The data come from the RNA Mapping Database (RMDB), library VIROID.
Chemical mapping of a 207-nucleotide RNA with 2A3.
For 2A3, 616 sequencing reads were counted.
RNA sequence: GGGAACGACUCGAGUAGAGUCGAAAAGGCGUCCAGCGGAGAAACAGGAGCUCGUCUCCUUCCUUUCGCUGCUGGCUCCACAUCCGAUCGUCGCUGAAGCGCCUCGACCCCUCGCCCGGAGCUUCUCUCUGGAGACUACCCGGUGGAUACAACUGAACCUUUCAAUAGGCUUCGGCCUAUUGAAAGGAAAAGAAACAACAACAACAAC
Reactivity to 2A3 in 0.01 (KOAc 150mM, MgCl2 10mM, bicine 150mM(pH8.5), 24C), signal-to-noise 2, nucleotides 027 to 156: g030g000c010g020u080c040c000a000g010c000g080g000a100g020a040a090a110c300a190g010g040a030g040c100u220c300g300u190c080u000c030c000u000u030c020c000u000u000u010c080g030c010u040g000c000u000g020g000c000u040c010c000a030c010a040u090c060c060g050a050u060c010g060u060c030g070c070u150g140a160a000g070c030g030c030c000u020c000g140a160c000c020c020c030u020c010g010c000c030c030g030g000a000g030c130u200u010c040u020c000u000c020u150g070g030a040g000a030c030u180a270c020c010c030g000g030u000g050g030a040u100a220c030a090a090c080u100g040a090a110